[RMDB]
RNA sequence: GGGAACGACUCGAGUAGAGUCGAAAAAUGAUACGAAGCCAUUGGCCUACAUCCACGCAAGGUUAUUACGUAUGUUUUCACAUGUUUGGACCUCAUGUCGCGGAAUACAUAUAAUAGAUGUACGCAAGUACAGCAGCGAAUUCGUUCGCUGCUGUACAAAAGAAACAACAACAACAAC
Reactivity to DMS in 0.01 (KOAc 150mM, MgCl2 10mM, bicine 150mM(pH8.5), 24C), signal-to-noise 3, nucleotides 027 to 126: a030u010g020a140u010a030c080g030a060a160g010c020c050a060u000u020g000g000c000c030u040a060c110a110u000c020c050a030c120g050c080a090a050g010g030u000u020a110u010u010a030c120g040u000a040u000g020u020u000u040u010c030a030c110a080u000g020u000u000u010g010g000a040c030c010u020c070a030u000g010u000c060g010c010g000g000a110a110u010a000c010a010u000a070u040a040a100u050a070g000a050u010g000u000a060c070g050c150a080a110
Reactivity to 2A3 in 0.01 (KOAc 150mM, MgCl2 10mM, bicine 150mM(pH8.5), 24C), signal-to-noise 6, nucleotides 027 to 126: a010u110g020a000u040a080c070g020a070a000g040c020c030a110u050u160g080g030c000c000u010a040c010a090u010c000c000a030c060g050c040a040a100g060g030u080u060a090u090u140a030c050g100u140a040u130g050u030u040u020u080c090a060c000a030u020g080u100u080u020g070g050a060c010c010u030c020a030u090g040u090c040g000c030g060g040a050a020u110a090c020a000u130a010u100a210a150u110a090g130a050u060g010u040a010c020g000c030a070a000